[RMDB]
RNA sequence: GGGAACGACUCGAGUAGAGUCGAAAAGCUGAAUGAAACAUCCAAACUGACUUUCAUGAAUUUUCUUAGGGAGAUAGAGUGAAAUAAAUUUAUGCUGCACUUUUCAGAGCACAGAAUCCCAAUUACAUUUUCAUUUUAGCUGGCUGUUUGAAGAUAACACUAUGAGCUGAUUCGUCAGCUCAUAGUGAAAAGAAACAACAACAACAAC
Reactivity to DMS in 0.01 (KOAc 150mM, MgCl2 10mM, bicine 150mM(pH8.5), 24C), signal-to-noise 1, nucleotides 027 to 156: g050c020u020g000a120a010u000g000a020a020a040c090a010u000c120c060a080a100a080c060u010g010a170c120u010u000u000c000a050u000g020a290a120u010u000u000u000c000u000u000a180g000g030g020a090g020a080u000a050g010a300g020u010g000a040a030a070u000a070a040a130u000u010u010a060u030g020c050u000g050c000a050c030u000u000u010u010c120a130g000a070g020c010a060c040a060g000a080a140u010c020c020c010a090a100u000u000a100c120a100u000u000u010u000c030a020u000u000u010u010a010g030c010u020g030g040c030u010g000u010u000u000g000a080a120g000a100u010a110a160
Reactivity to 2A3 in 0.01 (KOAc 150mM, MgCl2 10mM, bicine 150mM(pH8.5), 24C), signal-to-noise 2, nucleotides 027 to 156: g000c010u000g050a020a020u080g050a070a050a010c000a060u030c080c020a060a060a080c070u050g050a030c010u020u100u060c040a020u050g120a110a080u060u090u030u070c010u060u110a110g010g050g000a010g010a010u070a070g110a010g040u090g060a000a040a060u120a020a100a040u150u170u160a070u090g010c010u010g020c030a030c070u080u080u090u090c070a070g000a000g080c030a000c010a040g090a060a060u020c010c000c000a040a040u100u040a040c040a030u060u040u000u040c010a030u010u010u030u190a010g000c020u000g120g000c010u000g010u050u090u120g070a060a060g050a040u100a100a060
Record summary
This 207-nucleotide RNA was probed chemically with DMS and 2A3. It was measured as part of the RMDB library OK3TST. Values cover nucleotides 27 to 156.